[RMDB]
RNA sequence: GGGAACGACUCGAGUAGAGUCGAAAAGUAAGGCUCAAUAGUCUGUCCGUUAGCUACCUUCUGAUGCCAGCUGACGCGAUAAUCUGCCGUCCACGCCUGAAUAUCCUGGCGGAUAUAUUGCGCCGCACCACGGACUAACAUUCGUGUUAGUCCGUGGAAAAGAAACAACAACAACAAC
Reactivity to 2A3 in 0.01 (KOAc 150mM, MgCl2 10mM, bicine 150mM(pH8.5), 24C), signal-to-noise 2, nucleotides 027 to 126: g040u110a010a020g040g000c000u000c000a030a120u020a040g080u000c020u020g040u000c000c030g040u020u030a020g000c070u110a080c050c050u150u190c090u180g150a130u200g130c060c040a020g050c040u010g040a010c010g060c040g030a000u060a060a110u060c040u000g060c060c010g020u030c030c000a100c060g060c000c030u040g050a040a100u090a100u100c000c060u060g030g040c000g000g000a000u060a010u000a020u000u040g020c030g020c080c010g040c020a020
Reactivity to DMS in 0.01 (KOAc 150mM, MgCl2 10mM, bicine 150mM(pH8.5), 24C), signal-to-noise 2, nucleotides 027 to 126: g010u000a070a090g000g030c010u000c050a050a070u000a010g010u020c060u000g010u000c010c020g000u020u000a040g020c020u000a080c060c050u010u010c110u000g000a150u020g000c100c060a080g020c040u000g010a060c050g010c050g030a040u000a050a050u000c060u010g010c090c010g000u000c060c060a060c090g000c070c080u000g000a090a110u000a040u000c010c100u010g020g000c050g010g010a050u000a070u010a040u010u000g010c100g010c000c000g000c160a300